[RMDB]
RNA sequence: GGGAACGACUCGAGUAGAGUCGAAAACCCUGGAACUUCGGUUCCAGGGCAUGGUGCAAAUCCCCCGCAGAAACGGAGCGAUAUCCGUCCCAAAAAUAUAAAAAGCUGAUGAUUUCGAUCAUCAGAAGUUAACAGACUUAUUCGUAAGUCUGUUAACAAAAGAAACAACAACAACAAC
Reactivity to 2A3 in 0.01 (KOAc 150mM, MgCl2 10mM, bicine 150mM(pH8.5), 24C), signal-to-noise 5, nucleotides 027 to 126: c000c000c000u000g010g000a000a000c000u020u080c250g090g000u010u000c000c000a000g000g010g010c000a040u120g060g020u120g060c050a040a030a230u100c020c010c000c000c000g000c010a030g190a040a040a000c010g000g000a010g010c000g010a010u000a000u030c000c010g010u040c020c000c000a050a090a000a040a000u220a020u110a060a170a040a020a010g030c000u000g000a000u000g000a000u040u070u150c220g040a010u000c000a000u000c010a010g010a020a020
Reactivity to DMS in 0.01 (KOAc 150mM, MgCl2 10mM, bicine 150mM(pH8.5), 24C), signal-to-noise 4, nucleotides 027 to 126: c000c000c000u000g000g010a010a010c000u000u010c190g050g020u000u000c000c000a020g010g000g010c030a010u000g010g030u000g010c250a070a130a110u010c020c000c010c010c010g000c010a090g010a150a100a040c010g020g000a010g020c030g030a050u010a030u010c000c020g000u000c020c060c080a020a080a080a090a100u020a110u020a080a080a070a130a110g010c010u000g000a000u000g000a020u000u000u010c200g000a020u000c000a000u000c000a000g010a030a050